[RMDB]
RNA sequence: GGGAACGACUCGAGUAGAGUCGAAAAGAAAGAAAGAAUUCGAUACGCCUCUGAUCUUCAGGAUCCCUGUCUGAACAUCGAAAUUGAGUGUUCGCAAGGAUUCCUCAAGAUCAGGGCCUCGAAUCAAAGAAGUUGCCAUAUUCGUAUGGCAACUUCUAAAAGAAACAACAACAACAAC
Reactivity to DMS in 0.01 (KOAc 150mM, MgCl2 10mM, bicine 150mM(pH8.5), 24C), signal-to-noise 2, nucleotides 027 to 126: g040a160a160a270g000a100a030a120g010a300a050u000u000c000g050a000u000a160c300g000c010c000u070c000u000g000a000u010c000u000u000c300a000g000g040a000u000c000c000c010u000g000u050c070u060g000a000a020c000a030u020c040g000a140a060a200u020u000g000a070g100u000g010u000u000c000g000c010a000a030g000g000a030u000u020c010c000u000c240a020a010g010a000u000c000a030g000g000g000c000c100u010c000g000a000a000u010c050a140a070
Reactivity to 2A3 in 0.01 (KOAc 150mM, MgCl2 10mM, bicine 150mM(pH8.5), 24C), signal-to-noise 4, nucleotides 027 to 126: g060a010a060a000g090a020a090a010g080a050a110u020u000c010g000a000u040a110c050g010c000c020u200c020u070g000a000u000c000u010u000c010a000g000g010a000u000c000c010c000u010g020u010c120u210g000a000a000c000a010u030c020g160a130a210a220u190u230g040a100g090u000g000u000u000c000g000c010a000a030g010g000a000u120u170c000c000u000c010a000a000g000a000u000c000a000g000g000g000c000c000u000c000g000a000a000u030c040a040a060
The data come from the RNA Mapping Database (RMDB), library RFM100. Structure probing data (DMS and 2A3) for a 177-nucleotide construct. Conditions: 150 mM KOAc, 10 mM MgCl2 and 150 mM bicine (pH 8.5), 24 C. Reactivities are rounded to 0.1 and cut off at 0 and 3. The DMS profile rests on 1,427 reads.